[RMDB]
RNA sequence: GGGAACGACUCGAGUAGAGUCGAAAACGAGGGGGUUCACACCCCCAGUCGGCGGGCCGGCUACUCUUCUUUUCCUUUCCUCGUCCUCCCCGGUCAGCCUCCAGAGUUCCUCUUCUUCUUCCUUGCUGUACAUAGCCCUUCGGGGCUAUGAAAAGAAACAACAACAACAAC
Reactivity to 2A3 in 0.01 (KOAc 150mM, MgCl2 10mM, bicine 150mM(pH8.5), 24C), signal-to-noise 5, nucleotides 027 to 129: c100g020a130g000g010g010g020g030u150u160c060a040c030a020c090c010c000c010c010a000g000u000c000g000g020c010g010g020g020c020c000g010g010c040u050a050c020u020c010u090u020c020u060u060u020u070c010c000u060u040u040c000c000u020c020g060u040c000c020u060c010c030c000c000g000g010u030c010a030g000c000c020u000c000c000a030g010a030g090u040u040c000c000u030c000u050u000c000u060u020c000u020u020c010c000u020u100g030c000u020g000u030a030
Reactivity to DMS in 0.01 (KOAc 150mM, MgCl2 10mM, bicine 150mM(pH8.5), 24C), signal-to-noise 6, nucleotides 027 to 129: c070g020a130g020g030g020g020g000u040u000c250a150c190a220c050c020c020c010c020a020g000u020c040g010g050c010g000g000g000c030c030g000g000c090u030a040c080u010c060u010u010c050u030u010u030u020c010c000u030u000u030c010c030u000c060g010u040c050c040u030c000c040c000c000g030g030u030c040a100g000c010c000u030c020c010a110g020a100g000u000u000c010c000u000c050u000u000c030u000u040c050u000u000c020c020u000u000g000c040u000g010u040a150
Description: The record gives the reactivity of an RNA of 170 nucleotides to 2A3 and DMS. The reactions ran in a buffer of 150 mM KOAc, 10 mM MgCl2 and 150 mM bicine (pH 8.5), at 24 C. 2A3 is a SHAPE reagent: it acylates the 2'-hydroxyl of flexible nucleotides of all four kinds. 2A3 adducts were read by reverse transcription with SuperScript II with manganese. DMS adducts were read by reverse transcription with MarathonRT. The DMS profile rests on 37,442 reads.